[RMDB]
RNA sequence: GGGAACGACUCGAGUAGAGUCGAAAAUUCUUUGUCCAUGAACUUUUGCACCUCCUGCACGUGUACAUGUUGUUCAUGAGGCCUAGGGGUCCAGACUCCAGGUCAACAUGUAAAAUGGGGAAUGUCCCGUAAUAACUGUAUUCGUACAGUUAUUACGAAAAGAAACAACAACAACAAC
Reactivity to DMS in 0.01 (KOAc 150mM, MgCl2 10mM, bicine 150mM(pH8.5), 24C), signal-to-noise 9, nucleotides 027 to 126: u000u000c020u000u000u000g010u010c080c020a030u000g010a060a040c050u000u000u000u000g010c030a050c060c060u010c050c060u000g010c090a070c170g010u000g010u000a030c060a020u000g010u000u000g000u010u010c030a030u000g010a150g000g000c010c010u000a110g050g010g010g010u000c110c220a180g000a060c010u000c000c000a030g000g010u000c000a050a050c040a010u000g000u000a050a050a110a050u000g000g000g000g010a060a050u000g000u000c020c020
Reactivity to 2A3 in 0.01 (KOAc 150mM, MgCl2 10mM, bicine 150mM(pH8.5), 24C), signal-to-noise 9, nucleotides 027 to 126: u030u010c000u040u040u090g090u000c030c010a020u030g030a030a040c020u070u100u090u100g000c020a020c010c030u160c020c050u120g020c100a030c090g050u030g020u040a030c020a080u070g020u090u050g040u060u080c020a020u040g030a050g010g000c000c010u070a160g000g020g000g000u010c060c040a100g100a070c000u000c010c000a000g000g000u010c030a040a050c020a030u050g030u130a030a070a070a090u060g010g000g000g040a030a030u040g040u030c010c010

About this RNA
This 177-nucleotide RNA was probed chemically with DMS and 2A3. 2A3 adducts were read by reverse transcription with SuperScript II with manganese. The reactions ran in a buffer of 150 mM KOAc, 10 mM MgCl2 and 150 mM bicine (pH 8.5), at 24 C. Source: RMDB library OK2TST, as collected in RNAgym. Values cover nucleotides 27 to 126. For DMS, 39,564 sequencing reads were counted. For 2A3, 37,729 sequencing reads were counted.